RNA sequence: GGGAACGACUCGAGUAGAGUCGAAAACAUCUUUCCUCCCUACACAGUGACUCGAGCUUGGGAGGGGCAGGGCUAGGCUGAGCCAGCACUCCCUGUGGUGUCUGCCUGCCACGUGCAGCUCUGGAGUAAAACCUGGAGAAGUUCGCUUCUCCAGGAACUCCAUUAAACUGUUCGCAGUUUAAUGGAGAAAAGAAACAACAACAACAAC
Reactivity to 2A3 in 0.01 (KOAc 150mM, MgCl2 10mM, bicine 150mM(pH8.5), 24C), signal-to-noise 3, nucleotides 027 to 156: c020a070u070c070u100u100u070c020c010u010c030c000c010u130a090c110a020c030a110g090u080g150a040c010u030c070g030a010g020c030u070u070g010g000g000a000g000g000g030g000c010a030g010g000g060c040u270a030g000g030c030u050g040a000g110c000c040a010g030c010a010c040u050c040c040c010u040g010u080g020g010u020g030u040c050u030g030c010c000u010g000c010c010a100c070g100u160g060c050a010g010c020u000c010u060g080g020a030g010u050a000a070a020a010c000c000u000g000g000a000g000a000a010g010u040u120c140g020c130u000u000c010u040c000c000a000g010g000a000a000
Reactivity to DMS in 0.01 (KOAc 150mM, MgCl2 10mM, bicine 150mM(pH8.5), 24C), signal-to-noise 1, nucleotides 027 to 156: c080a080u000c140u000u000u010c030c010u000c000c030c000u040a180c130a130c100a110g030u010g000a080c050u000c010g000a150g000c110u000u010g000g010g000a080g010g040g010g060c020a060g020g020g020c040u010a110g040g020c060u000g000a300g000c060c010a060g000c050a040c020u000c050c100c100u020g050u020g030g040u000g000u000c030u010g000c000c000u000g000c030c050a060c070g060u010g040c070a050g030c040u000c010u000g030g000a100g010u010a090a040a090a160c000c000u000g000g000a030g000a030a000g020u000u000c280g030c000u000u010c000u000c000c000a030g000g000a010a020
Chemical mapping of a 207-nucleotide RNA with 2A3 and DMS.
It was measured as part of the RMDB library M2RFOK.
Reactivities are given for positions 27 through 156.
The reactions ran in a buffer of 150 mM KOAc, 10 mM MgCl2 and 150 mM bicine (pH 8.5), at 24 C.
For DMS, 2,392 sequencing reads were counted.